[RMDB]
RNA sequence: GGGAACGACUCGAGUAGAGUCGAAAAUCGUGAGAUGUGGUGCCUCACGCGCUCGAGGCGUCCGUGGUCAGAGAGACCACUGACGCAAAAACUCGAGCGCAAAUAAAUUGCAUUACAUCGAGAAUAAAUAGUACUAAUGCUUCGGCAUUAGUACUAUAAAAGAAACAACAACAACAAC
Reactivity to DMS in 0.01 (KOAc 150mM, MgCl2 10mM, bicine 150mM(pH8.5), 24C), signal-to-noise 3, nucleotides 027 to 126: u020c050g020u000g010a090g010a020u000g010u010g000g030u000g040c010c300u000c190a110c210g000c020g000c000u000c000g030a010g000g010c000g010u000c000c070g000u000g030g010u000c000a180g070a290g000a210g020a020c000c010a010c030u000g000a010c000g010c000a030a020a040a080a300c050u000c020g000a040g030c000g000c000a000a040a050u020a050a080a070u030u010g020c000a010u000u010a010c000a010u000c000g020a140g000a040a070u060a030a090
Reactivity to 2A3 in 0.01 (KOAc 150mM, MgCl2 10mM, bicine 150mM(pH8.5), 24C), signal-to-noise 3, nucleotides 027 to 126: u200c060g020u050g080a100g010a030u020g020u030g000g010u010g020c010c020u140c010a130c160g000c000g000c000u000c000g000a010g020g000c000g000u000c010c000g010u000g000g020u020c060a090g090a060g010a020g000a300c000c000a000c000u000g000a000c000g000c000a070a100a050a020a060c000u000c000g000a000g000c010g000c000a000a010a000u080a000a030a010u070u130g000c000a000u000u000a000c010a000u010c020g040a030g070a060a070u190a140a180
Overview
The record gives the reactivity of an RNA of 177 nucleotides to DMS and 2A3. Reactivities are rounded to 0.1 and cut off at 0 and 3. It was measured as part of the RMDB library OK1LIB. Values cover nucleotides 27 to 126.